[RMDB]
RNA sequence: GGGAACGACUCGAGUAGAGUCGAAAAGUGAAUUCGUUCACAUACACGCGUACUACUCCGUGGUAAGAGGGUGGGCACAGAUUCUCCCAAAUAGGAGAAUCUAGCCCACCUACCCACCUUACACACGGAGUAUCGCACAGGUCCCCUUCGGGGGAAACUUCUUGGUUUCCUUCGGGAAACCAAGAAGAAAAGAAACAACAACAACAAC
Reactivity to 2A3 in 0.01 (KOAc 150mM, MgCl2 10mM, bicine 150mM(pH8.5), 24C), signal-to-noise 1, nucleotides 027 to 156: g050u010g000a010a010u140u120c210g130u120u000c040a020c000a000u210a090c120a100c100g000c000g000u150a070c050u020a020c020u140c010c000g000u000g010g010u010a020a000g000a060g000g000g010u000g040g000g000c010a050c040a300g000a000u010u000c000u110c020c000c050a150a270a140u300a150g000g000a040g000a000a000u000c000u000a010g000c020c000c000a000c000c000u000a000c000c000c000a000c000c000u100u000a000c300a000c000a000c050g010g010a000g000u000a000u000c040g000c000a040c010a120g110g080u030c060c040c000c000u130u180c300g010g020g010g000g000a100a000a000